About this RNA:
This 177-nucleotide RNA was probed chemically with 2A3 and DMS. For DMS the reverse transcriptase was MarathonRT. The RNA was probed in 150 mM KOAc, 10 mM MgCl2 and 150 mM bicine (pH 8.5) at 24 C.
RNA sequence: GGGAACGACUCGAGUAGAGUCGAAAAGAUAUGGAAUCCAUGAGCGAUGAGAUACGGUUUCGGAAACGAAAUUAUCGAGCUUUGUGGAUUCCUAAGUCAAACUAUAUGUCGUUCGCGACAUAUAGAAGACCAGGUUACAGUUCGCUGUAACCUGGUCAAAAGAAACAACAACAACAAC
Reactivity to 2A3 in 0.01 (KOAc 150mM, MgCl2 10mM, bicine 150mM(pH8.5), 24C), signal-to-noise 1, nucleotides 027 to 126: g000a020u020a010u060g000g020a040a000u010c000c000a040u100g020a000g040c070g140a240u260g090a190g000a040u150a130c250g160g040u000u030u010c020g000g040a010a000a000c000g020a010a000a000u080u040a010u030c020g020a050g030c040u070u130u230g040u030g000g000a000u000u020c010c000u000a020a020g000u030c020a170a010a050c000u000a000u000a000u000g010u020c020g030u010u110c270g030c020g180a000c000a000u000a000u000a000g070a040a030
Reactivity to DMS in 0.01 (KOAc 150mM, MgCl2 10mM, bicine 150mM(pH8.5), 24C), signal-to-noise 1, nucleotides 027 to 126: g020a010u000a200u020g000g030a000a020u010c000c000a000u010g000a020g040c020g030a260u010g030a110g000a030u000a000c300g020g060u000u000u010c010g000g000a000a080a100c010g010a010a010a030u000u000a020u000c010g000a080g040c000u010u000u010g130u010g030g000a020u000u000c000c000u000a000a070g000u000c010a100a080a170c020u010a010u000a010u000g020u000c000g010u000u030c300g030c010g000a000c040a000u000a000u000a000g000a110a090